[RMDB]
RNA sequence: GGGAACGACUCGAGUAGAGUCGAAAAUAAAAUAGCGUACUAGAGACGCUGAUCUCUAGAUAACUACGAACUCUAGAGAUACGGUCCAAUUGAAUACAAGGAGAGUUGGACCUAUUCGUAGAAAAAACAUAUCUUUCGUCUUCGGACGAAAGAUAUGAAAAGAAACAACAACAACAAC
Reactivity to 2A3 in 0.01 (KOAc 150mM, MgCl2 10mM, bicine 150mM(pH8.5), 24C), signal-to-noise 2, nucleotides 027 to 126: u190a000a060a020a070u140a010g010c000g000u020a000c040u050a060g040a040g000a070c000g030c010u000g010a080u010c010u000c000u020a020g040a080u060a110a080c050u040a000c030g020a060a010c020u000c000u010a010g010a000g050a080u070a130c060g020g000u000c000c000a000a020u010u060g070a120a040u120a190c140a130a120g130g070a210g130a010g060u010u000g000g010a000c000c040u010a120u040u060c000g000u010a020g000a060a080a000a000a000a000
Reactivity to DMS in 0.01 (KOAc 150mM, MgCl2 10mM, bicine 150mM(pH8.5), 24C), signal-to-noise 2, nucleotides 027 to 126: u000a080a010a100a170u000a000g000c000g060u000a040c030u010a120g000a080g010a020c030g010c030u000g020a080u000c000u000c010u000a030g010a010u010a080a140c010u010a000c040g020a040a130c250u000c000u000a040g000a100g000a090u000a050c080g000g030u000c000c010a020a010u000u000g050a190a180u000a050c300a050a090g000g030a140g000a050g010u000u000g000g020a010c000c000u010a020u010u000c000g010u000a030g010a020a000a040a080a100a110